[RMDB]
RNA sequence: GGGAACGACUCGAGUAGAGUCGAAAAGGGCAAAAAAGCAAACUUGACCACCAAGGAUAAAAGAGAUCUUAUCCAAGGAUGCAAAAGAUAAUCUCACUUUUGACACCCACUGAUCUCGAACUUAAAGAAAACCGAGACUACUUCGGUAGUCUCGGAACUUUGAUGCAGCGUUCGCGCUGCAUCAAAGAAAAGAAACAACAACAACAAC
Reactivity to 2A3 in 0.01 (KOAc 150mM, MgCl2 10mM, bicine 150mM(pH8.5), 24C), signal-to-noise 1, nucleotides 027 to 156: g000g020g020c060a140a090a000a000a000a000g050c110a120a060a050c070u050u050g040a110c030c010a010c020c010a020a030g060g010a010u040a050a060a010a020g010a010g000a010u000c000u000u040a030u010c030c040a070a020g000g000a020u050g000c000a000a050a000a020g040a080u160a150a140u130c090u030c150a030c010u000u020u000u010g100a140c010a020c040c070c010a030c060u100g000a000u000c010u000c000g060a020a030c050u130u120a190a000a080g090a030a010a040a030c000c010g010a000g000a010c000u000a000c000u010u030c150g110g000u030a010g010u020c000u000c000g000g000a000a000

Conditions: 150 mM KOAc, 10 mM MgCl2 and 150 mM bicine (pH 8.5), 24 C. An RNA of 207 nucleotides, treated with 2A3 and read out base by base. Values cover nucleotides 27 to 156. For 2A3, 622 sequencing reads were counted. Source: RMDB library M2RFPK, as collected in RNAgym.